[RMDB]
RNA sequence: GGGAACGACUCGAGUAGAGUCGAAAAGAUAUGGAGUGCCGGUGGGAGAUGUGGGUCGGAAACGACCCAAACAUCAUCGAUCACCUGGCACUCCUAAGUCAAACGCAAGAAGUUCGCUUCUUGCGAACCUCGCAUAUGUCUUCGGACAUAUGCGAGGAAAAGAAACAACAACAACAAC
Reactivity to DMS in 0.01 (KOAc 150mM, MgCl2 10mM, bicine 150mM(pH8.5), 24C), signal-to-noise 1, nucleotides 027 to 126: g000a020u030a300u000g000g000a000g000u000g000c010c000g000g030u000g010g000g000a300g000a040u000g030u000g080g000g000u010c000g010g010a040a050a160c030g000a000c000c000c000a010a090a040c180a140u020c010a090u030c070g000a300u030c020a000c000c000u040g030g000c010a000c010u010c000c010u000a000a080g000u000c020a010a080a280c030g000c020a000a030g000a000a030g040u000u040c290g020c000u000u000c040u000u000g000c000g010a020a000